Annotation
This 207-nucleotide RNA was probed chemically with 2A3 and DMS. Reactivities are given for positions 27 through 156. The reactions ran in a buffer of 150 mM KOAc, 10 mM MgCl2 and 150 mM bicine (pH 8.5), at 24 C. For DMS, 9,128 sequencing reads were counted. For DMS the reverse transcriptase was MarathonRT. 2A3 adducts were read by reverse transcription with SuperScript II with manganese.
RNA sequence: GGGAACGACUCGAGUAGAGUCGAAAAUUCUCGGUCUCUCGCAACGGUGUCUGGUUUACUCGGUCAGGUCUGGAAGGAAGCAGCCAAAGUCGGAAUUACUGUGUGCCGAGAAGAAGCUGGGAAGGUUAAAAGUUACUGAGUGUUCGCACUCAGUAACCUAAAUGGAAUAGUUCGCUAUUCCAUUUAGAAAAGAAACAACAACAACAAC
Reactivity to 2A3 in 0.01 (KOAc 150mM, MgCl2 10mM, bicine 150mM(pH8.5), 24C), signal-to-noise 4, nucleotides 027 to 156: u010u000c000u000c000g030g030u080c010u000c010u010c020g000c010a010a020c010g010g010u020g000u000c010u020g000g030u060u090u100a160c090u100c120g020g030u090c000a010g030g020u020c010u050g040g040a070a070g040g000a020a010g000c000a000g000c010c000a040a030a020g030u030c010g030g020a070a040u200u130a110c020u020g030u050g110u060g130c090c020g020a000g000a020a040g010a030a010g010c020u050g000g000g020a010a020g050g010u130u160a060a160a030a030g000u000u000a000c000u000g010a000g000u020g040u060u160c230g040c110a000c000u000c000a000g000u000a000a000c000
Reactivity to DMS in 0.01 (KOAc 150mM, MgCl2 10mM, bicine 150mM(pH8.5), 24C), signal-to-noise 4, nucleotides 027 to 156: u000u000c000u010c010g020g000u000c040u000c010u010c020g010c030a080a050c010g040g020u010g020u000c040u000g020g010u000u010u000a050c090u000c060g080g040u000c030a210g010g010u000c010u000g030g020a160a190g010g020a060a090g010c040a180g010c030c030a120a060a100g010u000c020g020g010a100a090u010u000a040c040u000g010u000g030u010g040c040c020g020a070g020a070a100g010a110a150g020c020u000g000g010g020a050a080g030g000u000u010a050a060a080a160g000u000u000a010c010u000g000a020g020u010g020u000u000c300g020c010a020c000u000c000a010g020u000a000a000c020